Structure probing data (DMS and 2A3) for a 177-nucleotide construct. DMS (dimethyl sulfate) methylates the pairing face of unpaired adenines and cytosines. DMS adducts were read by reverse transcription with MarathonRT. For DMS, 1,648 sequencing reads were counted. For 2A3 the reverse transcriptase was SuperScript II with manganese.

RNA sequence: GGGAACGACUCGAGUAGAGUCGAAAACACCUAUAUCGCGGUGGACGACGUCGAUGCGGUGGUGGACAAGGUGGUGCCCGGGGGCGGGCAGGUGAUGAUGCCGGCCUUCGACAUCGGCGAUGCCGGCCCGAAGAGCGAGAUUCGUCUCGCUCUUCGGAAAAGAAACAACAACAACAAC
Reactivity to DMS in 0.01 (KOAc 150mM, MgCl2 10mM, bicine 150mM(pH8.5), 24C), signal-to-noise 2, nucleotides 027 to 126: c130a090c010c010u000a140u000a050u010c070g000c030g000g050u010g020g010a080c030g010a110c100g020u000c030g040a110u010g020c060g020g030u000g000g030u010g000g000a080c110a080a100g000g000u010g000g000u010g000c020c020c010g010g000g000g000g010c030g020g000g010c030a000g020g010u020g000a150u010g000a130u000g030c000c020g010g020c020c110u000u020c050g020a070c050a040u010c060g010g040c010g000a090u020g010c010c020g010g000c060
Reactivity to 2A3 in 0.01 (KOAc 150mM, MgCl2 10mM, bicine 150mM(pH8.5), 24C), signal-to-noise 1, nucleotides 027 to 126: c030a010c000c040u050a040u020a040u230c070g010c010g000g090u040g080g050a030c060g010a040c030g020u050c030g030a030u080g050c000g040g030u040g020g040u070g020g030a050c050a110a060g000g050u030g070g070u100g040c030c030c020g020g000g010g000g020c070g020g000g000c020a020g000g060u100g030a130u040g020a010u090g010c000c000g150g000c030c060u000u000c010g000a000c010a070u070c060g000g000c000g000a000u060g020c030c040g030g090c040